[RMDB]
RNA sequence: GGGAACGACUCGAGUAGAGUCGAAAACUGCCAGGCAGAAGCUCAAAGAUGCAGAAAGAGCGGUGGAAUUGGACCCCGAUGAUGUUAACAAAAGCACAUUACAGAGCAGACGGGCAGCUGUGUCUGCCCACAUAACUCCGUUCGCGGAGUUAUGUGGAAAAGAAACAACAACAACAAC
Reactivity to DMS in 0.01 (KOAc 150mM, MgCl2 10mM, bicine 150mM(pH8.5), 24C), signal-to-noise 9, nucleotides 027 to 126: c030u000g010c020c020a070g000g020c050a050g000a120a110g000c020u000c040a070a110a130g010a120u020g020c070a100g010a080a110a110g010a070g010c040g000g010u020g000g010a100a130u020u020g000g010a120c040c010c000c040g000a060u010g000a060u010g020u010u010a080a130c210a070a070a090a090g010c060a040c050a030u010u020a100c130a120g000a090g000c030a040g000a120c080g010g000g010c030a020g010c040u020g010u010g000u010c000u000g000c130
Reactivity to 2A3 in 0.01 (KOAc 150mM, MgCl2 10mM, bicine 150mM(pH8.5), 24C), signal-to-noise 9, nucleotides 027 to 126: c010u040g020c020c010a040g040g020c020a030g030a160a020g020c010u020c060a110a130a030g120a100u190g060c050a030g150a120a140a010g050a040g020c030g010g020u100g030g080a110a130u090u110g090g050a110c010c010c010c030g000a010u070g010a010u030g040u100u100a200a080c080a090a120a040a010g050c020a010c000a040u030u190a070c040a050g050a010g040c010a010g020a030c030g000g030g000c020a030g020c040u060g030u020g040u090c000u010g010c000